[RMDB]
RNA sequence: GGGAACGACUCGAGUAGAGUCGAAAACUAGUGUCACUAACUUUUUGGUUGAAUAACUGGUAUAGUAGAUCCGAUCACACCACCAUCUCCAGAACGACAGACGUUCUAAGUUCGAAUUCUCUUUCACCCGUAGAUAGUCGUGACAUAUUACCAAUUGCGUUAAGAGUCCUUUCGAGGACUCUUAACGAAAAGAAACAACAACAACAAC
Reactivity to 2A3 in 0.01 (KOAc 150mM, MgCl2 10mM, bicine 150mM(pH8.5), 24C), signal-to-noise 5, nucleotides 027 to 156: c050u040a040g030u010g010u030c010a010c040u060a180a050c050u060u080u060u110u250g060g030u060u080g040a060a060u150a130a040c060u030g010g020u070a060u040a140g100u030a040g010a070u020c060c070g040a030u050c030a010c020a030c120c020a050c030c020a080u080c030u040c100c030a020g020a040a000c010g110a040c050a120g130a120c020g020u040u000c010u050a060a040g020u020u030c030g010a060a100u140u030c020u000c000u030u050u040c010a050c020c010c020g000u020a030g040a160u080a040g040u070c030g010u010g020a000c010a020u120a070u040u090a050c030c000a030a090u220u170g060
Reactivity to DMS in 0.01 (KOAc 150mM, MgCl2 10mM, bicine 150mM(pH8.5), 24C), signal-to-noise 2, nucleotides 027 to 156: c070u000a040g020u000g020u000c010a050c010u010a050a050c060u000u000u000u000u000g010g020u000u000g000a100a110u000a060a110c050u020g000g010u000a090u000a100g020u010a090g000a070u000c060c010g010a110u000c020a130c050a090c060c020a010c030c040a090u000c050u000c060c030a080g020a070a050c010g010a210c110a130g010a170c020g000u000u000c040u010a100a120g000u000u000c030g010a040a090u000u010c010u000c020u010u010u000c040a060c050c020c050g060u010a070g020a100u010a040g040u000c100g030u010g010a060c030a030u000a070u000u000a040c000c000a030a080u000u010g000